[RMDB]
RNA sequence: GGGAACGACUCGAGUAGAGUCGAAAAGAUAUGGAUAGGUGUUGACGCGCUCGAUAUGCGUUUGACGCUAACUUAUCGGAAACGAUAAGUUAGCCGAGCAUGCGAGCGCGAAGGCCUAUCCUAAGUCCGCUAAUGAAAACUUCGGUUUUCAUUAGCGAAAAGAAACAACAACAACAAC
Reactivity to DMS in 0.01 (KOAc 150mM, MgCl2 10mM, bicine 150mM(pH8.5), 24C), signal-to-noise 2, nucleotides 027 to 126: g000a110u020a290u010g020g010a020u020a010g010g020u000g020u000u000g010a300c070g030c010g000c000u010c000g000a120u020a000u000g000c000g000u010u000u010g010a220c300g000c000u000a010a000c000u000u000a000u000c000g000g000a100a120a150c000g020a000u000a010a000g000u000u000a000g020c010c010g000a050g020c010a000u000g010c000g000a020g020c000g040c010g010a050a060g010g000c000c000u010a000u000c000c000u000a060a070g000u000c060
Reactivity to 2A3 in 0.01 (KOAc 150mM, MgCl2 10mM, bicine 150mM(pH8.5), 24C), signal-to-noise 1, nucleotides 027 to 126: g060a060u090a020u200g000g010a000u000a010g000g070u120g200u300u300g230a190c040g050c010g000c010u000c010g160a270u040a020u230g050c060g060u060u220u300g040a020c000g000c000u000a000a010c010u020u010a000u000c000g000g000a060a080a010c020g010a010u000a010a000g000u010u000a000g060c000c010g030a020g000c070a010u020g040c000g000a020g000c000g000c000g000a000a000g010g000c000c010u030a010u050c000c010u000a040a010g020u040c010
Structure probing data (DMS and 2A3) for a 177-nucleotide construct.
High DMS reactivity at an A or C suggests that its Watson-Crick edge is free.
Source: RMDB library TTRINS, as collected in RNAgym.
Reactivities are given for positions 27 through 126.
For 2A3 the reverse transcriptase was SuperScript II with manganese.
For DMS the reverse transcriptase was MarathonRT.